[RMDB]
RNA sequence: GGGAACGACUCGAGUAGAGUCGAAAAGCUGUCGACCGCGACAAUGACGGAAUCGGAUUCACUGAGCAUGAGCCUGUCGGUGAGCAGCACGCCGUGGUGGAGCGACGUGGCGUGCCCGACACUCACCCGCCCGAGGGUCAUUCGUGACCCUCGGGCGAAAAGAAACAACAACAACAAC
Reactivity to 2A3 in 0.01 (KOAc 150mM, MgCl2 10mM, bicine 150mM(pH8.5), 24C), signal-to-noise 3, nucleotides 027 to 126: g020c030u020g110u090c040g040a050c010c050g090c050g090a030c120a130a110u190g080a050c040g010g060a050a140u080c000g010g050a030u040u030c060a070c120u070g020a010g060c020a070u020g010a010g010c000c070u080g040u040c000g010g030u100g030a150g010c020a000g010c000a020c000g000c000c000g020u040g000g070u080g050g090a060g060c040g000a040c010g000u010g010g040c010g000u000g000c010c010c010g070a010c020a010c050u020c020a020c010c010
Structure probing data (2A3) for a 177-nucleotide construct. 2A3 adducts were read by reverse transcription with SuperScript II with manganese.